[RMDB]
RNA sequence: GGGAACGACUCGAGUAGAGUCGAAAAACAUGAAGGCUGACAUGGUUGAAAGUCAAUUGGCAAUCCUUGAGGCUCCUACCGCUGAUGAAAAGGAUGUUAUUACCAUUAGCGUUGAGAAUGGAAAAGAGCACGGGAUAUAGUUCGCUAUAUCCCGUGCAAAAGAAACAACAACAACAAC
Reactivity to DMS in 0.01 (KOAc 150mM, MgCl2 10mM, bicine 150mM(pH8.5), 24C), signal-to-noise 1, nucleotides 027 to 126: a080c080a050u010g000a170a130g020g010c040u000g000a070c090a020u000g000g010u010u000g010a020a140a070g000u000c130a090a130u000u030g090g030c030a080a020u000c000c000u000u000g020a210g000g030c010u010c030c050u020a030c180c110g000c040u000g000a030u000g050a020a060a040a030g000g000a060u000g020u020u020a060u020u000a120c180c000a050u000u000a010g020c140g050u000u000g010a120g000a030a050u000g020g000a160a160a040a080g010a140